[RMDB]
RNA sequence: GGGAACGACUCGAGUAGAGUCGAAAAUCAGCGAUCUUGAAUUGGCACACAACGUCGCCGCUGCUGCCGGUGCAUGUGCCAGUGUCCAGAUAGGGGGCGCCAGUUCUGGCGGUGUCGCUGACGCGUCCUCGACAUACCCUUUCGAGGGUAUGUCGAGAAAAGAAACAACAACAACAAC
Reactivity to 2A3 in 0.01 (KOAc 150mM, MgCl2 10mM, bicine 150mM(pH8.5), 24C), signal-to-noise 2, nucleotides 027 to 126: u040c010a000g000c010g030a030u040c030u020u030g020a050a020u030u020g000g010c010a020c000a000c020a040a220c130g200u220c040g040c020c000g000c050u160g070c060u130g110c120c000g000g000u000g000c020a030u040g000u000g000c000c000a010g000u020g120u000c020c010a000g000a040u050a290g020g000g000g010g000c020g000c000c010a040g040u200u090c070u100g010g000c010g060g050u070g000u030c010g020c000u010g020a000c010g000c000g000u020c010
Reactivity to DMS in 0.01 (KOAc 150mM, MgCl2 10mM, bicine 150mM(pH8.5), 24C), signal-to-noise 2, nucleotides 027 to 126: u000c010a000g020c020g000a000u000c040u010u010g010a110a030u000u010g010g010c020a040c000a010c220a110a120c230g010u010c030g030c020c040g020c060u010g010c180u000g000c170c010g040g010u000g000c070a160u010g010u000g000c020c000a030g000u000g000u000c040c080a040g000a060u010a180g010g010g000g010g000c020g020c030c050a050g010u010u000c080u000g000g010c040g000g010u000g000u010c010g010c000u000g000a020c080g000c080g000u000c040